[RMDB]
RNA sequence: GGGAACGACUCGAGUAGAGUCGAAAAUAACACAGGUUGCAGCCAGUACAAUCUUCGGGCGCCACUUGUAAGAUAUAUUUCUGCCCACGCAUAUCACGGGCUUUAACAUCCAGUGACUGUAAGCUGAUCAGGCGAUAUAGUUCGCUAUAUCGCCUGAAAAAGAAACAACAACAACAAC
Reactivity to DMS in 0.01 (KOAc 150mM, MgCl2 10mM, bicine 150mM(pH8.5), 24C), signal-to-noise 2, nucleotides 027 to 126: u000a090a140c080a060c030a060g020g020u000u010g000c000a100g030c000c040a050g030u000a090c220a090a110u000c150u010u000c060g010g010g010c020g000c020c070a020c020u000u020g010u000a110a070g010a070u000a020u010a090u000u000u010c130u000g000c010c020c030a110c110g010c080a080u010a090u000c050a060c080g000g010g010c110u000u010u010a060a070c190a090u010c020c030a040g020u010g010a020c210u010g010u010a060a140g010c050u010g020a250